[RMDB]
Structure probing data (DMS and 2A3) for a 207-nucleotide construct.
The reactions ran in a buffer of 150 mM KOAc, 10 mM MgCl2 and 150 mM bicine (pH 8.5), at 24 C.
High DMS reactivity at an A or C suggests that its Watson-Crick edge is free.
DMS adducts were read by reverse transcription with MarathonRT.
RNA sequence: GGGAACGACUCGAGUAGAGUCGAAAACAGUUUUUGUUACUGCAAACAAUACUGCAGCUAAUAUUUUUACACAUUGUUUGGAUAUAUACAUUAUUUCUAUAGGAUGGAUUCUUUGAAAUGGAAUUGCUUGAGUCAAAGAGAAUGCACAUUUACAUUAACGCGUCAUAAAUUUCGAUUUAUGACGCGUAAAAGAAACAACAACAACAAC
Reactivity to DMS in 0.01 (KOAc 150mM, MgCl2 10mM, bicine 150mM(pH8.5), 24C), signal-to-noise 1, nucleotides 027 to 156: c050a160g030u000u040u040u000u000g020u010u000a030c030u000g020c040a070a130a100c030a110a170u000a210c080u010g030c030a060g040c040u000a040a070u010a020u000u010u020u000u040a090c070a090c040a080u000u000g010u000u000u000g020g000a110u010a080u010a140u030a060c010a040u000u010a080u000u020u020c010u010a110u030a180g000g000a090u000g000g010a210u000u000c020u000u010u000g010a080a080a080u000g020g030a040a140u000u000g000c040u010u000g020a170g010u000c040a080a040a190g010a060g020a050a080u010g010c060a030c050a110u010u010u010a070c050a090u010u000a140
Reactivity to 2A3 in 0.01 (KOAc 150mM, MgCl2 10mM, bicine 150mM(pH8.5), 24C), signal-to-noise 3, nucleotides 027 to 156: c010a010g040u000u020u000u140u040g030u010u070a030c010u000g020c030a050a080a050c030a120a140u060a160c020u020g030c010a030g000c020u070a110a040u010a160u070u110u080u160u250a030c040a000c010a020u060u060g010u090u070u070g070g000a000u070a060u040a050u060a180c020a020u100u130a090u080u240u020c090u050a120u070a170g040g000a010u060g040g000a010u020u040c020u010u050u050g070a040a060a010u030g010g050a040a020u050u060g000c000u080u110g030a040g060u100c040a000a130a000g020a010g040a050a010u130g010c040a010c020a100u090u090u090a030c000a030u150u260a070
Annotation
2A3 adducts were read by reverse transcription with SuperScript II with manganese. Values cover nucleotides 27 to 156.